Chemical mapping of a 207-nucleotide RNA with 2A3. The reactions ran in a buffer of 150 mM KOAc, 10 mM MgCl2 and 150 mM bicine (pH 8.5), at 24 C.
RNA sequence: GGGAACGACUCGAGUAGAGUCGAAAACCCCGUCCUGCUUGGAUGGUGCAGGUAUGCGGGUUUGCUGGAGAGCAGGUCUUCAUACCAUAACUGCGGAAACCGGUCGAGGCCCGGAAGGGAGCAGACUUACUGUGGGCAACUAUCGCUUGCGGGGCUGGGAUAGUGGUGUGUUCGCACACCACUAUCCAAAAGAAACAACAACAACAAC
Reactivity to 2A3 in 0.01 (KOAc 150mM, MgCl2 10mM, bicine 150mM(pH8.5), 24C), signal-to-noise 1, nucleotides 027 to 156: c000c000c000c000g010u010c000c000u020g010c000u010u000g030g010a000u020g020g000u010g040c020a000g010g000u010a010u000g020c030g010g020g040u000u010u000g000c030u050g030g160a220g020a000g160c000a010g000g000u000c000u010u010c000a010u000a000c000c010a020u130a080a040c000u020g000c040g000g060a230a110a110c140c010g020g000u010c000g000a050g000g080c010c000c010g000g090a040a110g060g000g000a000g000c020a000g010a020c000u000u060a000c000u000g010u020g030g000g000c050a090a030c030u000a000u000c040g040c300u000u010g000c020g000g000g010g010c050u120g000

It was measured as part of the RMDB library ARCHII.